[RMDB]
RNA sequence: GGGAACGACUCGAGUAGAGUCGAAAAGAUAUGGAACCGCUACCUUGCAACAGCUUGGUUCGGAAACGAACCAAGACAUGCAAGUAGGCGGUUCCUAAGUCAAAACGAUGGUCUUCGGACCAUCGAACAUUGACACGAGGUUCGCCUCGUGUCAAUGAAAAGAAACAACAACAACAAC
Reactivity to 2A3 in 0.01 (KOAc 150mM, MgCl2 10mM, bicine 150mM(pH8.5), 24C), signal-to-noise 1, nucleotides 027 to 126: g010a010u070a070u160g020g010a010a000c010c010g020c010u030a050c060c010u050u000g010c020a080a070c060a300g060c000u000u000g010g010u030u020c000g000g000a070a090a010c020g000a010a000c020c020a010a020g000a040c000a020u080g000c000a010a000g000u020a090g050g040c000g020g000u000u010c000c020u000a000a000g000u010c010a000a060a070a120c010g000a010u010g010g000u000c010u040u100c300g120g020a000c010c010a000u000c000g010a000a010
Reactivity to DMS in 0.01 (KOAc 150mM, MgCl2 10mM, bicine 150mM(pH8.5), 24C), signal-to-noise 3, nucleotides 027 to 126: g000a020u010a300u000g000g020a010a020c000c010g030c010u020a220c300c040u000u000g000c000a030a120c300a230g000c000u000u000g000g010u000u000c000g010g010a100a050a110c010g010a000a010c000c000a000a000g030a000c050a210u000g000c000a000a000g000u000a270g040g010c010g000g040u000u000c000c000u010a000a080g000u000c000a140a080a100a130c010g000a000u000g030g030u000c000u010u020c300g020g000a020c000c000a000u000c000g000a050a090
This 177-nucleotide RNA was probed chemically with 2A3 and DMS. It was measured as part of the RMDB library TTRDES. DMS adducts were read by reverse transcription with MarathonRT. For 2A3 the reverse transcriptase was SuperScript II with manganese.